[RMDB]
RNA sequence: GGGAACGACUCGAGUAGAGUCGAAAACAAAUACCGUUCGCGGUAUUUGAAAUACGGAAACCUUCGUGCCGUCAGAAGUUAAGAGGUGCUUGGUCUCGUUAAAAAUCAGCUGAUUCGUCAGCUGAAACAAAGUUGUUGAGUUCGCUCAACAACUUUGAAAAGAAACAACAACAACAAC
Reactivity to DMS in 0.01 (KOAc 150mM, MgCl2 10mM, bicine 150mM(pH8.5), 24C), signal-to-noise 3, nucleotides 027 to 126: c010a020a000a020u010a010c000c000g030u000u010c180g050c010g010g010u000a010u000u010u010g010a080a120a060u000a090c040g030g000a050a070a050c010c010u010u010c200g010u000g020c010c000g010u010c120a100g000a140a110g020u010u020a050a070g000a150g000g030u000g000c040u000u000g000g020u000c050u000c010g010u010u000a030a050a060a110a100u010c000a000g000c000u010g010a010u000u010c200g020u010c010a010g010c000u000g000a010a050a140
Reactivity to 2A3 in 0.01 (KOAc 150mM, MgCl2 10mM, bicine 150mM(pH8.5), 24C), signal-to-noise 2, nucleotides 027 to 126: c010a000a000a000u010a000c010c010g010u030u040c230g000c020g120g010u000a010u010u000u020g000a030a010a010u190a010c060g040g020a040a060a040c000c000u040u050c040g000u010g000c020c010g150u070c040a120g040a300a060g240u150u230a150a020g090a020g110g000u020g010c020u030u020g000g010u000c040u010c020g030u040u040a080a190a030a010a060u020c010a000g020c000u010g020a030u020u060c160g050u010c090a000g010c020u010g000a000a010a010
An RNA of 177 nucleotides, treated with DMS and 2A3 and read out base by base.
The DMS profile rests on 2,514 reads.
It was measured as part of the RMDB library M2PK50.
The reactions ran in a buffer of 150 mM KOAc, 10 mM MgCl2 and 150 mM bicine (pH 8.5), at 24 C.